Notes:
Structure probing data (2A3 and DMS) for a 207-nucleotide construct. For 2A3 the reverse transcriptase was SuperScript II with manganese. For DMS the reverse transcriptase was MarathonRT. The 2A3 profile rests on 1,188 reads.
[RMDB]
RNA sequence: GGGAACGACUCGAGUAGAGUCGAAAAUCCACUUCAGCAAACAGAGGCUGGUAUUAGUUUAAACUUAAGUGAUGCUUUUAAAAUAGAAGACGGACGGUUAGGACUAAAAGUGGCUAGUAUGGGUGGUUUACAAAUGACAGCAGAGGGUCUUGCAUUAAACUGGUAUAAGGUUCGCCUUAUACCAGUUAAAAGAAACAACAACAACAAC
Reactivity to 2A3 in 0.01 (KOAc 150mM, MgCl2 10mM, bicine 150mM(pH8.5), 24C), signal-to-noise 2, nucleotides 027 to 156: u010c010c000a030c030u060u070c030a010g010c020a080a100a150c050a110g090a110g100g000c020u040g030g000u070a150u060u060a020g030u040u040u170a120a130a110c050u080u080a100a040g040u040g080a030u060g010c000u010u040u040u110a130a180a050a080u110a080g050a040a000g020a000c020g000g010a000c020g000g000u040u040a040g000g060a010c000u050a080a010a060a030g050u050g010g030c000u030a000g020u050a080u020g000g040g000u000g000g000u000u030u040a000c020a030a030a010u020g000a010c010a000g010c010a010g010a020g040g020g000u000c020u020u050g000c010a030u050u100a060
Reactivity to DMS in 0.01 (KOAc 150mM, MgCl2 10mM, bicine 150mM(pH8.5), 24C), signal-to-noise 2, nucleotides 027 to 156: u000c010c010a040c070u010u000c040a120g040c030a080a110a160c070a110g000a140g010g020c030u000g040g050u000a080u010u010a120g010u000u000u000a120a080a090c050u010u000a050a060g030u010g010a100u000g000c030u000u000u010u010a030a030a100a130u000a090g010a070a060g020a060c050g030g000a040c090g010g020u000u010a070g000g030a110c040u000a020a100a080a080g020u000g010g020c060u000a070g000u000a070u000g000g010g040u000g030g020u000u000u000a120c040a020a030a070u000g010a060c060a050g000c080a080g010a050g030g010g020u000c040u000u010g010c040a080u000u000a050